[RMDB]
RNA sequence: GGGAACGACUCGAGUAGAGUCGAAAAGCUCGGUGGCUCGUGCCUGUAAUCCCAGCACUUCGGGAGGUUAAGGCAGGAGGAUCGCUAGAUCCCAGGAGUUUGAGACCAGCCCUGGCAAGAUAGUGAGGGAGUCAUGCUAAUUCGUUAGCAUGACUCCAAAAGAAACAACAACAACAAC
Reactivity to DMS in 0.01 (KOAc 150mM, MgCl2 10mM, bicine 150mM(pH8.5), 24C), signal-to-noise 2, nucleotides 027 to 126: g020c020u000c040g020g010u010g010g020c040u000c030g030u000g000c010c000u000g000u020a160a130u010c010c000c000a100g000c170a110c110u010u010c140g010g010g000a040g010g010u010u000a120a040g000g030c010a030g020g020a060g000g010a040u000c000g020c130u000a080g000a070u010c120c000c010a140g000g000a090g050u030u010u000g020a100g010a110c070c020a100g010c060c000c010u010g000g020c070a090a030g010a170u000a030g020u010g010a120g010
Reactivity to 2A3 in 0.01 (KOAc 150mM, MgCl2 10mM, bicine 150mM(pH8.5), 24C), signal-to-noise 1, nucleotides 027 to 126: g060c010u000c040g170g000u120g060g000c010u010c050g110u000g020c000c040u040g100u080a060a040u010c000c000c010a050g060c200a080c030u270u230c100g060g000g000a020g000g000u160u140a080a000g000g000c000a000g040g010a020g060g020a050u060c030g000c030u060a030g000a140u160c000c000c100a050g050g010a100g030u090u140u120g060a050g080a010c010c010a000g000c000c020c000u040g060g030c010a030a040g030a100u090a020g120u130g080a100g030